[RMDB]
RNA sequence: GGGAACGACUCGAGUAGAGUCGAAAACAAGAUAAUCCACUUCUAGGCGAUAUCAUUAGUGGUGAACAGGUUAGAUUUUGCCAUUUCCCCGAACCGCGUGACCAACUCGUGGACGGGUUGCAGACAUAACAUACAUAUACCUGUAUCUGUCUAUAACCGAGCCAAUACGAUUCGUCGUAUUGGCUCGAAAAGAAACAACAACAACAAC
Reactivity to 2A3 in 0.01 (KOAc 150mM, MgCl2 10mM, bicine 150mM(pH8.5), 24C), signal-to-noise 1, nucleotides 027 to 156: c020a010a060g000a100u040a060a080u020c000c000a020c020u060u040c030u070a060g010g000c100g120a100u000a020u130c060a100u090u010a000g030u000g020g000u020g010a030a000c000a010g000g010u010u000a000g040a200u010u080u100u130g000c090c010a140u120u240u200c000c070c000c030g090a070a090c000c000g000c030g000u020g030a100c070c050a110a170c040u020c050g000u000g010g040a020c000g020g000g040u020u000g030c000a050g000a060c010a050u140a080a000c000a010u070a110c040a030u160a020u060a120c010c010u000g000u000a050u000c020u050g080u000c030u110a080u040a220a030c000